[RMDB]
RNA sequence: GGGAACGACUCGAGUAGAGUCGAAAAAGGCAGCUUCCCGGCUAUUAAGCUACGGACGAUGCAAACGUAGCAGGCAUCGAAUUUUCGGCCCUUCGAAAAGCUGAGAUGAGCUCAGCAAGGGAAUCAAUAAUAUGAUAAAAUUCGUUUUAUCAUAUUAAAAAGAAACAACAACAACAAC
Reactivity to DMS in 0.01 (KOAc 150mM, MgCl2 10mM, bicine 150mM(pH8.5), 24C), signal-to-noise 4, nucleotides 027 to 126: a060g010g000c050a050g020c060u000u000c010c000c000g010g040c020u000a090u010u000a080a120g020c010u000a020c030g000g000a090c070g010a080u010g000c110a080a090a200c030g010u000a020g020c030a150g000g020c040a060u000c040g030a070a120u000u000u000u010c030g000g000c070c010c010u000u000c070g010a100a070a100a090g010c000u000g010a030g020a300u010g010a140g020c010u010c000a010g010c010a070a060g000g000g010a060a070u010c040a060a130
Reactivity to 2A3 in 0.01 (KOAc 150mM, MgCl2 10mM, bicine 150mM(pH8.5), 24C), signal-to-noise 2, nucleotides 027 to 126: a000g050g000c030a020g000c030u010u010c010c000c000g000g030c020u000a070u190u210a120a050g000c010u000a010c030g040g020a050c080g090a110u160g040c020a060a130a030c060g010u000a000g000c020a020g070g000c000a060u100c070g060a150a130u080u030u080u080c020g060g040c000c000c000u020u040c040g040a110a030a030a040g000c010u000g000a010g000a090u180g100a060g100c020u000c010a000g000c010a030a010g000g000g020a030a010u100c010a040a000